[RMDB]
RNA sequence: GGGAACGACUCGAGUAGAGUCGAAAAUGAUUCACUUGAUGAAGAGUUUUGUCUUUCCAUGGUCUUAAAGUUCUUGUCAAUGUUGAUUGAGUUACCGUGAAUGGUUGAACAUUGUUCAUUGAUGUUACUAAUGUUCUGCGUAGACUCAAUCGGGAUGGUACACCAUAUGAUUCGUCAUAUGGUGUACAAAAGAAACAACAACAACAAC
Reactivity to DMS in 0.01 (KOAc 150mM, MgCl2 10mM, bicine 150mM(pH8.5), 24C), signal-to-noise 3, nucleotides 027 to 156: u000g000a270u010u000c020a040c030u000u000g020a140u000g000a020a050g000a280g000u000u020u000u000g020u000c030u000u010u000c000c020a200u010g010g000u020c050u000u000a050a080a120g010u000u000c040u000u000g000u000c040a110a090u010g020u000u020g010a040u000u010g010a070g020u000u000a070c170c010g020u000g010a030a040u000g010g030u010u000g000a020a030c020a010u000u000g000u000u010c180a250u010u010g010a040u000g020u000u010a090c040u000a010a070u000g010u000u010c010u020g020c050g030u000a100g030a030c010u010c010a030a040u000c000g000g020g000a060u000g000
Reactivity to 2A3 in 0.01 (KOAc 150mM, MgCl2 10mM, bicine 150mM(pH8.5), 24C), signal-to-noise 7, nucleotides 027 to 156: u100g010a040u060u040c020a020c080u160u110g030a120u060g050a150a060g030a040g040u060u040u070u100g090u050c050u020u060u020c040c030a080u120g080g000u090c050u100u190a080a070a070g020u020u030c010u050u060g050u030c050a040a100u120g060u170u140g060a000u000u000g000a000g010u010u010a050c110c050g030u040g020a070a060u130g080g070u080u060g010a010a000c000a000u000u050g050u160u170c080a120u100u240g090a060u050g050u080u050a130c040u160a070a030u090g000u030u000c010u030g030c020g040u030a050g040a120c000u000c000a000a010u000c000g000g040g000a080u130g030